[RMDB]
RNA sequence: GGGAACGACUCGAGUAGAGUCGAAAAGCGUUCAGGAUCAGUUCAGCUACCAUGCCGCAGCGGUAGGAGUUGAUGGCGCCGUUGUCAUCAUACUGGUCCAGAAAGUGCGGCGUGUUCUGGAUCUGCCUGCUUCGCCGUCGCAGCGCCAGGAUGGCUCCAUUGUUCCGUCGUUCGCGACGGAACAAUGAAAAGAAACAACAACAACAAC
Reactivity to 2A3 in 0.01 (KOAc 150mM, MgCl2 10mM, bicine 150mM(pH8.5), 24C), signal-to-noise 3, nucleotides 027 to 156: g010c020g000u010u000c010a010g010g110a200u200c030a000g010u040u010c000a000g030c050u030a020c010c100a030u020g010c000c000g080c080a140g240c050g080g030u100a050g060g020a040g010u020u080g000a020u000g000g060c040g080c060c260g210u160u230g020u000c010a010u000c000a000u030a150c050u120g100g090u070c000c000a010g060a040a080a010g100u020g000c000g000g000c010g000u010g010u030u030c020u000g080g050a130u040c010u020g020c000c020u060g030c080u020u040c010g000c020c030g110u040c030g000c050a040g030c000g000c010c030a060g180g000a080u130g040g040c000u040c020

Chemical mapping of a 207-nucleotide RNA with 2A3. It was measured as part of the RMDB library OK3TST. The RNA was probed in 150 mM KOAc, 10 mM MgCl2 and 150 mM bicine (pH 8.5) at 24 C. The 2A3 profile rests on 1,618 reads. 2A3 adducts were read by reverse transcription with SuperScript II with manganese.